[RMDB]
RNA sequence: GGGAACGACUCGAGUAGAGUCGAAAAUAUCGAACAGUCAGGUUAACAGGCUGCGGCAUUUUGUCCGCGCCGGGCUUCGCUCACUGUUCAGGCCGGAGCCACAGACCGCCGUUGAAUGGGCGGAUGCAAGUUUUACAGUAUUCGUACUGUAAAACUUAAAAGAAACAACAACAACAAC
Reactivity to 2A3 in 0.01 (KOAc 150mM, MgCl2 10mM, bicine 150mM(pH8.5), 24C), signal-to-noise 8, nucleotides 027 to 126: u100a030u040c030g000a010a010c000a010g070u090c020a010g050g090u070u080a080a040c020a050g020g000c040u150g000c130g010g000c020a040u100u190u170u300g050u060c010c000g000c000g000c000c000g010g030g000c040u040u020c030g010c020u020c010a040c010u020g010u050u020c000a000g000g000c020c030g060g020a030g020c000c010a040c010a040g130a100c010c000g000c010c010g060u090u180g160a200a120u140g080g000g000c010g010g010a000u030g030c030
Reactivity to DMS in 0.01 (KOAc 150mM, MgCl2 10mM, bicine 150mM(pH8.5), 24C), signal-to-noise 9, nucleotides 027 to 126: u010a080u010c090g010a020a020c020a020g010u000c180a070g010g000u000u000a080a160c080a130g010g010c010u010g060c000g010g010c010a230u000u000u010u010g010u010c000c000g020c010g010c000c010g010g020g020c080u000u000c090g010c040u000c160a050c020u000g010u000u000c020a120g010g020c090c040g020g000a080g010c040c060a130c130a090g000a120c010c010g010c000c010g020u010u010g010a130a130u010g000g000g010c000g000g010a080u000g010c180
The record gives the reactivity of an RNA of 177 nucleotides to 2A3 and DMS. Source: RMDB library OK2TST, as collected in RNAgym. Reactivities are rounded to 0.1 and cut off at 0 and 3.